[RMDB]
This 207-nucleotide RNA was probed chemically with DMS and 2A3. Conditions: 150 mM KOAc, 10 mM MgCl2 and 150 mM bicine (pH 8.5), 24 C. Reactivities are given for positions 27 through 156. The 2A3 profile rests on 2,562 reads.

RNA sequence: GGGAACGACUCGAGUAGAGUCGAAAAGGGUGAGACCUAGGAACCGUAGGGGUAUUCUCAAAGGAAGCUUUUGCAGUGACGCCCAUGUAAGUGGGAUAUGACAACAGAACUCGUAUGAGUAGCCUAAUAAAUCGGACCUUCUUCGGAAGGUCCGAAACUAUAUUGGUACCUUCGGGUACCAAUAUAGAAAAGAAACAACAACAACAAC
Reactivity to DMS in 0.01 (KOAc 150mM, MgCl2 10mM, bicine 150mM(pH8.5), 24C), signal-to-noise 2, nucleotides 027 to 156: g000g010g020u000g000a070g000a070c010c020u000a140g050g010a090a050c040c040g010u000a090g010g000g000g000u010a090u010u010c020u010c040a060a100a200g010g010a040a060g010c040u000u000u000u000g030c020a130g010u010g010a120c050g000c010c000c000a030u010g010u000a080a150g020u000g020g020g010a100u000a040u010g000a070c030a050a070c060a110g000a090a070c020u010c010g020u000a170u000g010a070g020u000a080g000c020c010u000a060a110u000a040a050a120u000c000g040g010a030c000c000u010u000c010u000u020c300g000g010a010a000g030g030u000c000c000g000a000a000a050
Reactivity to 2A3 in 0.01 (KOAc 150mM, MgCl2 10mM, bicine 150mM(pH8.5), 24C), signal-to-noise 4, nucleotides 027 to 156: g030g000g000u050g030a110g040a040c020c030u050a040g030g050a030a050c040c030g040u090a040g000g020g010g000u030a100u120u070c030u020c040a030a040a010g050g020a060a010g050c020u030u050u050u060g040c040a020g010u010g060a010c100g010c000c020c020a000u070g080u130a120a110g030u010g000g030g010a010u040a050u150g060a020c030a040a010c010a100g060a090a020c020u020c030g070u220a080u140g020a010g030u030a020g030c000c020u070a130a110u110a120a150a060u060c050g000g000a000c000c000u000u010c000u020u020c070g060g010a000a000g000g000u000c000c000g000a000a000a000